Source: RMDB library OK1LIB, as collected in RNAgym. This 177-nucleotide RNA was probed chemically with 2A3 and DMS. The reactions ran in a buffer of 150 mM KOAc, 10 mM MgCl2 and 150 mM bicine (pH 8.5), at 24 C. The 2A3 profile rests on 643 reads. For DMS the reverse transcriptase was MarathonRT. High DMS reactivity at an A or C suggests that its Watson-Crick edge is free. Reactivities are given for positions 27 through 126. For DMS, 4,967 sequencing reads were counted.
[RMDB]
RNA sequence: GGGAACGACUCGAGUAGAGUCGAAAAAUGAUCUGGAACUAGAUGCAUCAACAGUGUACCAUCCAGUGAUUGAUGUAAGAGAUCAAGUUGUAAUAGGGGAAGAUGACAGUUCAGAUUCUGAUGAAGAAAUUCGGCCUAUUUUCGAAUAGGCCGAAUUAAAAGAAACAACAACAACAAC
Reactivity to 2A3 in 0.01 (KOAc 150mM, MgCl2 10mM, bicine 150mM(pH8.5), 24C), signal-to-noise 2, nucleotides 027 to 126: a000u090g000a000u040c000u040g020g030a030a010c020u050a100g070a130u090g000c010a000u000c020a000a030c030a090g180u090g060u200a300c060c090a080u200c040c060a010g180u070g060a300u000u000g020a020u000g010u060a110a000g000a030g000a130u090c090a000a000g020u020u010g090u100a070a220u050a120g000g090g000g030a000a050g010a000u040g070a000c040a000g020u020u050c040a010g000a120u160u000c000u030g200a300u160g100a080a050g100a040
Reactivity to DMS in 0.01 (KOAc 150mM, MgCl2 10mM, bicine 150mM(pH8.5), 24C), signal-to-noise 3, nucleotides 027 to 126: a070u010g010a020u000c000u000g000g000a120a090c120u000a100g000a100u000g000c000a000u000c000a050a020c060a070g030u000g010u050a110c110c050a060u020c130c000a030g010u020g010a190u000u010g000a020u000g060u010a080a110g010a050g000a040u010c040a020a100g000u010u000g000u000a050a050u020a090g030g030g000g010a060a020g000a040u000g000a100c140a030g010u020u010c050a070g020a120u010u000c070u020g010a110u010g010a060a060g020a090